Overview
Chemical mapping of a 177-nucleotide RNA with DMS. Conditions: 150 mM KOAc, 10 mM MgCl2 and 150 mM bicine (pH 8.5), 24 C. High DMS reactivity at an A or C suggests that its Watson-Crick edge is free. The data come from the RNA Mapping Database (RMDB), library OK2TST. DMS adducts were read by reverse transcription with MarathonRT.
[RMDB]
RNA sequence: GGGAACGACUCGAGUAGAGUCGAAAAGGGUGGAGGCGGCCCGGGCUCUGGGGGCGAUCGGUGACCCGCGGGCCAUCCCGGCGCUCAUCGAGGGGCUCACUUCUUCUUCCCCGGAGCUCCAGCUCGCACACCAUGGGGAAUUCGUUCCCCAUGGUGUAAAAGAAACAACAACAACAAC
Reactivity to DMS in 0.01 (KOAc 150mM, MgCl2 10mM, bicine 150mM(pH8.5), 24C), signal-to-noise 1, nucleotides 027 to 126: g010g020g040u010g020g010a080g070g030c050g020g030c070c020c300g000g000g000c020u010c020u000g000g020g010g040g000c230g030a040u010c060g010g010u010g010a030c020c030c030g020c040g000g020g000c030c050a040u000c060c120c080g010g000c140g000c070u000c170a090u000c080g000a080g010g050g010g040c250u000c020a020c010u000u020c050u020u000c060u050u000c010c000c000c020g000g020a010g020c000u000c000c020a060g000c030u020c050g020c130